[RMDB]
RNA sequence: GGGAACGACUCGAGUAGAGUCGAAAAACAUCAGCAGGUACAUCUUCGCAGAGGGGCAGGACUUCAAAGCUGAUGAGUACCUGUACUCUCCGUGCAUGGCAGACUCUGAAUUGCGGAAGAAGGCAGCCGGAUCCAUUUCUUUCGAGAAAUGGAUCCGAAAAGAAACAACAACAACAAC
Reactivity to DMS in 0.01 (KOAc 150mM, MgCl2 10mM, bicine 150mM(pH8.5), 24C), signal-to-noise 1, nucleotides 027 to 126: a140c000a170u080c170a000g000c120a050g000g020u000a010c120a030u020c030u000u020c030g060c000a050g080a300g000g000g000g000c000a080g000g000a280c020u020u000c010a110a170a300g020c180u070g000a040u000g000a050g020u000a130c000c030u030g010u000a030c050u000c000u000c000c000g000u030g000c080a040u020g000g000c000a080g000a030c070u000c070u030g000a070a080u040u020g010c000g000g000a060a050g000a100a100g000g000c030a000g000c150
Reactivity to 2A3 in 0.01 (KOAc 150mM, MgCl2 10mM, bicine 150mM(pH8.5), 24C), signal-to-noise 3, nucleotides 027 to 126: a000c040a040u150c060a000g020c000a010g000g040u120a060c040a230u010c030u090u090c050g000c040a010g010a030g040g020g010g000c020a070g110g100a080c000u090u070c130a080a070a020g060c070u120g050a090u060g000a060g010u090a130c000c000u000g000u190a210c020u050c010u000c010c040g010u050g030c010a050u030g000g030c000a020g060a160c020u020c020u060g080a140a090u160u080g000c020g010g030a090a050g020a000a020g110g000c010a010g030c070
This 177-nucleotide RNA was probed chemically with DMS and 2A3. For 2A3 the reverse transcriptase was SuperScript II with manganese. The 2A3 profile rests on 1,455 reads. The RNA was probed in 150 mM KOAc, 10 mM MgCl2 and 150 mM bicine (pH 8.5) at 24 C.